[RMDB]
RNA sequence: GGGAACGACUCGAGUAGAGUCGAAAAUGACGUCGUUUCGACGACGUCAACAUAAAAUCAGCGGUAAAUAAUUAGGAGGGGUUACCGCUGAACGCCUCCAUACGAGAGGGCUAUUCGUAGCCCUCAAGUUGAUAUAACACUUCGGUGUUAUAUCAACAAAAGAAACAACAACAACAAC
Reactivity to DMS in 0.01 (KOAc 150mM, MgCl2 10mM, bicine 150mM(pH8.5), 24C), signal-to-noise 6, nucleotides 027 to 126: u000g000a020c000g000u000c000g020u000u000u020c180g020a030c000g020a010c000g010u000c000a010a060c150a070u020a070a070a110a120u000c010a010g000c000g000g000u000a010a030a090u020a090a100u010u010a110g010g010a050g000g000g020g010u000u000a010c010c000g000c000u000g000a010a030c150g010c030c010u000c080c090a130u010a100c220g000a220g000a010g000g010g000c000u000a020u000u010c200g010u000a000g000c000c000c000u000c000a000a060
Reactivity to 2A3 in 0.01 (KOAc 150mM, MgCl2 10mM, bicine 150mM(pH8.5), 24C), signal-to-noise 9, nucleotides 027 to 126: u050g000a000c000g000u000c010g000u020u060u110c240g080a020c000g020a000c000g000u000c000a000a000c010a020u170a010a120a010a110u030c000a000g000c010g020g020u020a030a070a090u170a150a240u300u280a200g090g040a050g000g040g010g000u010u010a010c000c000g000c000u000g000a000a000c010g040c010c010u050c040c030a060u110a160c100g020a070g000a000g170g000g000c000u000a020u020u050c130g050u020a000g000c000c000c000u000c000a000a000